Chemical mapping of a 177-nucleotide RNA with DMS and 2A3.
It was measured as part of the RMDB library RFMREP.
RNA sequence: GGGAACGACUCGAGUAGAGUCGAAAAGCAAACGGGCACUGGCUUCAGGAGAGGAUGUUCCAUGGCCGUAAGCGCAGGCACACCACAGUGCCUGCUAUCACGGCAUUAUCGCCAGCGGUGCUGCCGUGUCCAGUAAAUGGUUCGCCAUUUACUGGACAAAAGAAACAACAACAACAAC
Reactivity to DMS in 0.01 (KOAc 150mM, MgCl2 10mM, bicine 150mM(pH8.5), 24C), signal-to-noise 1, nucleotides 027 to 126: g000c120a030a130a110c060g000g000g030c040a030c020u000g000g020c020u010u000c180a160g010g000a130g000a080g000g020a060u010g000u010u010c070c090a130u010g020g000c000c010g000u000a020a060g050c160g000c000a010g000g000c000a020c010a140c160c300a080c210a150g000u010g000c000c010u000g000c020u010a020u000c140a000c000g010g020c010a100u000u000a040u000c000g010c000c030a090g000c040g000g020u000g000c010u000g000c030c070g000u000
Reactivity to 2A3 in 0.01 (KOAc 150mM, MgCl2 10mM, bicine 150mM(pH8.5), 24C), signal-to-noise 2, nucleotides 027 to 126: g050c020a110a090a020c030g030g000g000c000a010c050u100g170g030c010u140u120c120a070g060g010a030g060a020g100g050a060u160g090u180u050c070c020a060u120g060g000c000c030g010u020a020a010g030c000g000c060a000g010g030c000a010c000a000c040c050a080c020a050g000u000g000c000c000u000g000c000u010a000u030c040a010c000g000g000c010a030u060u160a030u070c040g030c030c000a030g020c040g000g010u020g000c020u030g110c030c000g040u030